[RMDB]
RNA sequence: GGGAACGACUCGAGUAGAGUCGAAAAUGACCUCAGCCUGCCACUGAGGGCUAACUGUGGCGUGAGUGUUGGCUCCAGGAGGUGCCAGUGGGAGGGCACUGGAGAGGGUGGGGCUUGGACAUGGGACUCACUGCUGUUAAUUCGUUAACAGCAGUGAAAAAGAAACAACAACAACAAC
Reactivity to 2A3 in 0.01 (KOAc 150mM, MgCl2 10mM, bicine 150mM(pH8.5), 24C), signal-to-noise 2, nucleotides 027 to 126: u090g030a030c000c000u030c000a000g040c010c030u130g040c030c010a020c030u040g040a130g040g000g000c030u040a050a050c030u070g020u100g130g010c050g040u120g070a050g030u150g070u080u120g040g000c010u000c020c010a060g080g040a040g010g080u050g010c030c000a000g000u110g030g060g030a150g020g050g000c060a030c050u110g050g020a060g040a040g020g050g100u250g050g000g000g000c000u010u100g020g000a020c020a110u010g040g030g030a030c000
Reactivity to DMS in 0.01 (KOAc 150mM, MgCl2 10mM, bicine 150mM(pH8.5), 24C), signal-to-noise 2, nucleotides 027 to 126: u010g010a090c020c020u000c040a060g000c030c020u020g000c040c080a250c000u010g000a130g000g000g000c020u000a040a150c060u000g020u000g010g020c040g000u020g020a140g020u010g010u010u000g000g000c000u020c050c030a100g010g000a090g010g000u010g000c010c010a040g000u020g000g030g000a170g000g020g000c050a100c080u030g010g000a200g000a100g000g000g010u000g000g000g030g030c100u020u000g000g010a030c120a060u010g020g010g000a150c160